Source: RMDB library 15KLIB, as collected in RNAgym.
The record gives the reactivity of an RNA of 170 nucleotides to 2A3 and DMS.
The RNA was probed in 150 mM KOAc, 10 mM MgCl2 and 150 mM bicine (pH 8.5) at 24 C.
2A3 adducts were read by reverse transcription with SuperScript II with manganese.
Reactivities are given for positions 27 through 129.
RNA sequence: GGGAACGACUCGAGUAGAGUCGAAAAUUGUACAGAGUUUUUCCUUAUGACAUGGAUUCUGGUGUGUCAUCCUUUAGUGAACUACUUUUUGAUUGCGUUGAUCUUUCAGUAGCUUCUACCUAUUUUUGCCGGCACCAGUUCGCUGGUGCCAAAAGAAACAACAACAACAAC
Reactivity to 2A3 in 0.01 (KOAc 150mM, MgCl2 10mM, bicine 150mM(pH8.5), 24C), signal-to-noise 4, nucleotides 027 to 129: u120u080g020u030a020c010a050g080a030g030u000u010u000u010u000c010c000u110u090a130u090g080a070c030a050u070g060g010a080u100u000c020u090g000g040u050g010u000g040u030c010a010u080c010c080u060u090u030a050g000u110g060a000a040c000u000a020c040u020u040u020u020u070g060a040u010u050g070c190g110u050u240g070a020u020c000u010u000u000c010a010g020u010a030g000c000u000u000c010u040a050c020c000u040a130u100u120u000u070u090g100c080c040
Reactivity to DMS in 0.01 (KOAc 150mM, MgCl2 10mM, bicine 150mM(pH8.5), 24C), signal-to-noise 4, nucleotides 027 to 129: u050u040g040u040a100c090a000g000a000g020u040u040u020u000u010c020c020u080u040a140u010g070a120c000a070u040g000g040a000u090u030c040u020g030g020u010g000u020g000u070c060a170u030c190c060u020u020u060a100g040u010g040a040a100c040u010a050c060u000u000u000u030u040g010a100u020u040g050c200g020u040u030g030a110u020c010u000u050u000c030a080g010u010a080g030c150u000u010c050u030a040c160c040u010a030u000u000u000u000u000g080c000c120